RNA sequence: GGGAACGACUCGAGUAGAGUCGAAAAAUUAUUCACAAGGUAGGGGCUGAUACAUGUGCGUUGGUUCAUGUGGAUCUGGAGGGUGUACCCGGCUCAAUGAACAGUAUGUUGGAGAGAGCCCAAGUUCGUUAGUGUUAACAUUCGUGUUAACACUAACAAAAGAAACAACAACAACAAC
Reactivity to DMS in 0.01 (KOAc 150mM, MgCl2 10mM, bicine 150mM(pH8.5), 24C), signal-to-noise 8, nucleotides 027 to 126: a090u030u020a060u020u010c060a060c090a090a090g020g010u020a070g010g000g000g010c040u000g010a090u010a040c040a040u010g020u020g010c090g010u020u020g010g010u010u000c020a040u000g020u010g000g010a040u010c040u010g010g010a090g000g000g020u010g010u030a070c060c020c040g010g010c040u010c040a080a070u010g000a030a050c090a130g020u020a050u000g010u020u000g000g000a130g000a130g010a040g000c000c010c050a080a090g010u020u020c140
Reactivity to 2A3 in 0.01 (KOAc 150mM, MgCl2 10mM, bicine 150mM(pH8.5), 24C), signal-to-noise 6, nucleotides 027 to 126: a000u170u100a080u100u180c080a060c030a130a040g140g010u070a040g090g030g000g000c070u050g050a050u060a070c030a060u090g010u030g060c080g130u100u110g100g030u050u030c010a010u120g050u040g290g020a040u000c010u030g030g040a090g020g010g050u090g040u080a100c030c010c000g000g010c010u010c010a060a130u090g050a050a020c020a020g080u090a070u190g100u070u050g080g000a080g000a000g010a000g090c000c000c000a050a010g040u070u100c030

Overview:
An RNA of 177 nucleotides, treated with DMS and 2A3 and read out base by base. The data come from the RNA Mapping Database (RMDB), library OK1LIB.